[RMDB]
RNA sequence: GGGAACGACUCGAGUAGAGUCGAAAACUUUUAUCAUCGGGAAUACGAAAGAAAAGGGAGAAUAAACGUCUUACUUAUAGAACAGUGAAGAAUGCCACAAUUUUACGCUUUGAAAAUGAUGACACUACAAGUUUCUAUAGUUCGCUAUAGAAACUUGAAAAGAAACAACAACAACAAC
Reactivity to 2A3 in 0.01 (KOAc 150mM, MgCl2 10mM, bicine 150mM(pH8.5), 24C), signal-to-noise 2, nucleotides 027 to 126: c010u000u020u180u160a070u060c020a040u030c000g000g000g070a030a040u160a130c030g100a030a010a130g060a030a070a030a010g040g080g020a020g020a040a100u100a130a070a040c020g020u000c000u010u040a080c000u030u100a070u040a120g050a070a020c010a020g030u010g030a040a020g020a040a010u050g020c020c000a070c000a060a030u050u020u040u130a040c060g000c050u040u040u160g120a150a070a000a010u080g020a030u060g010a030c010a010c040u080a020
Reactivity to DMS in 0.01 (KOAc 150mM, MgCl2 10mM, bicine 150mM(pH8.5), 24C), signal-to-noise 2, nucleotides 027 to 126: c060u000u000u010u010a040u010c030a050u000c030g020g000g010a060a060u020a110c070g020a090a040a080g010a050a040a060a080g020g000g020a060g000a100a050u010a040a130a110c120g010u000c020u000u000a080c050u000u000a130u010a080g030a110a070c080a050g000u010g010a050a070g000a030a030u000g010c020c040a040c070a050a060u000u000u000u000a090c080g030c120u000u000u010g010a040a040a050a060u000g000a060u000g020a070c140a020c120u000a140
The record gives the reactivity of an RNA of 177 nucleotides to 2A3 and DMS. For DMS, 1,678 sequencing reads were counted. Conditions: 150 mM KOAc, 10 mM MgCl2 and 150 mM bicine (pH 8.5), 24 C. The 2A3 profile rests on 1,402 reads.